[RMDB]
RNA sequence: GGGAACGACUCGAGUAGAGUCGAAAAUCUAUGCCCGUGACAGAGUGGUAUCAGAGCAGACUUGCUUUACAUCAAUGCCCAGCAGUUCACUCGAUGAUGCACAACUCCAGGGCCAGUGUCAAAAGUACUUUGAAGUAAAGUUCGCUUUACUUCAAAGAAAAGAAACAACAACAACAAC
Reactivity to DMS in 0.01 (KOAc 150mM, MgCl2 10mM, bicine 150mM(pH8.5), 24C), signal-to-noise 7, nucleotides 027 to 126: u010c050u010a110u010g010c010c010c010g020u010g010a120c190a100g000a050g020u010g000g010u000a030u010c020a140g010a040g020c050a120g020a040c050u000u010g030c010u000u010u010a080c100a100u010c200a090a080u020g000c060c080c110a070g010c020a020g010u000u000c050a130c010u000c020g010a100u000g010a030u000g010c020a050c060a060a060c020u000c020c030a140g020g010g020c010c160a050g010u000g010u000c100a050a060a070a090g010u000a080
Reactivity to 2A3 in 0.01 (KOAc 150mM, MgCl2 10mM, bicine 150mM(pH8.5), 24C), signal-to-noise 6, nucleotides 027 to 126: u010c010u030a110u180g010c000c000c020g090u070g020a080c070a060g040a010g020u030g020g010u030a010u030c010a010g000a010g050c050a030g040a050c020u070u200g030c020u130u130u130a060c020a060u140c090a160a220u140g030c020c010c020a000g000c000a010g010u060u070c030a040c080u010c030g100a160u160g000a010u030g050c040a040c020a270a110c020u000c010c020a040g010g000g000c030c020a090g040u070g060u140c030a060a040a030a040g010u000a080
The record gives the reactivity of an RNA of 177 nucleotides to DMS and 2A3. As a SHAPE reagent, 2A3 marks flexible, mostly unpaired nucleotides at the ribose 2'-OH. Values cover nucleotides 27 to 126. It was measured as part of the RMDB library VIROID.